Chemical mapping of a 207-nucleotide RNA with DMS and 2A3. The data come from the RNA Mapping Database (RMDB), library OK3TST. Conditions: 150 mM KOAc, 10 mM MgCl2 and 150 mM bicine (pH 8.5), 24 C. For DMS, 5,635 sequencing reads were counted. For 2A3 the reverse transcriptase was SuperScript II with manganese.
RNA sequence: GGGAACGACUCGAGUAGAGUCGAAAACAGUGUGCAGUAUAUAAUUGUUUGCAGGUGUCAUUGAACUGGACCUGAAUAAUUUAAGGAUUGAAAGUGUUCAAGAAGUACCCAUGGAUGCUUCAGUAGUUCAUCCUAAUUGAGGAUAUGGGGAAAGUUACAUUUUAAUCAGGUUCGCCUGAUUAAAAUGAAAAGAAACAACAACAACAAC
Reactivity to DMS in 0.01 (KOAc 150mM, MgCl2 10mM, bicine 150mM(pH8.5), 24C), signal-to-noise 3, nucleotides 027 to 156: c040a120g000u000g020u010g030c040a060g020u000a090u000a090u000a070a100u000u010g010u000u010u000g020c020a040g050g000u010g020u010c030a100u010u010g010a080a090c090u000g000g000a150c030c020u000g000a110a110u000a060a050u000u010u000a120a110g020g010a080u000u000g020a050a030a100g020u010g020u000u000c040a050a110g020a050a100g010u000a160c010c010c000a190u010g020g010a070u000g010c030u000u010c010a060g030u000a070g010u000u010c060a070u020c120c010u010a050a130u000u000g020a080g000g010a090u010a070u000g020g000g040g010a090a090a090g000u010u000a120
Reactivity to 2A3 in 0.01 (KOAc 150mM, MgCl2 10mM, bicine 150mM(pH8.5), 24C), signal-to-noise 4, nucleotides 027 to 156: c020a020g040u060g010u040g090c050a020g070u060a050u040a030u050a260a170u120u070g020u080u050u120g040c020a000g040g000u040g080u100c040a070u070u110g060a060a070c070u050g020g020a010c000c000u010g030a040a030u050a050a010u070u140u110a070a040g040g030a030u060u120g070a080a090a040g050u070g030u060u040c050a050a020g050a050a000g030u030a020c010c000c050a010u020g070g000a020u050g070c010u040u060c050a050g010u040a010g010u100u130c020a040u040c020c000u040a110a120u080u040g020a020g020g000a020u010a040u130g030g020g000g000a050a030a030g020u050u040a020

Reactivities are given for positions 27 through 156.